[RMDB]
Conditions: 150 mM KOAc, 10 mM MgCl2 and 150 mM bicine (pH 8.5), 24 C. Structure probing data (2A3) for a 207-nucleotide construct. Values cover nucleotides 27 to 156.

RNA sequence: GGGAACGACUCGAGUAGAGUCGAAAAACCCUCCCGGGUGUUUCCUCUUCCUAGGUCCGGAGUCUACCUCCAUCUGAUCCGGGCUGGCUGUCUUCGCCGGGGGAGCUCCCUCCCCAUCCUUGACCUUUCUUAUUAUUCCUCGGAUGUUCCAUGGCCACUUAGAUGAUUGGUUCGCCAAUCAUCUAAGAAAAGAAACAACAACAACAAC
Reactivity to 2A3 in 0.01 (KOAc 150mM, MgCl2 10mM, bicine 150mM(pH8.5), 24C), signal-to-noise 1, nucleotides 027 to 156: a000c020c000c010u040c060c020c000g030g050g010u060g030u030u120u070c000c010u040c020u130u100c030c050u080a020g020g020u000c040c030g030g030a100g060u000c050u080a060c040c050u080c050c000a120u120c150u140g010a070u010c000c040g010g000g000c020u030g000g000c050u040g050u200c060u150u140c120g050c050c020g000g000g000g030g000a010g060c080u070c100c010c010u020c010c000c010c000a030u000c000c030u000u060g100a100c010c000u000u210u060c070u100u160a130u180u060a070u160u120c000c000u040c050g040g050a120u070g000u030u050c030c010a040u030g100g000c040c040a060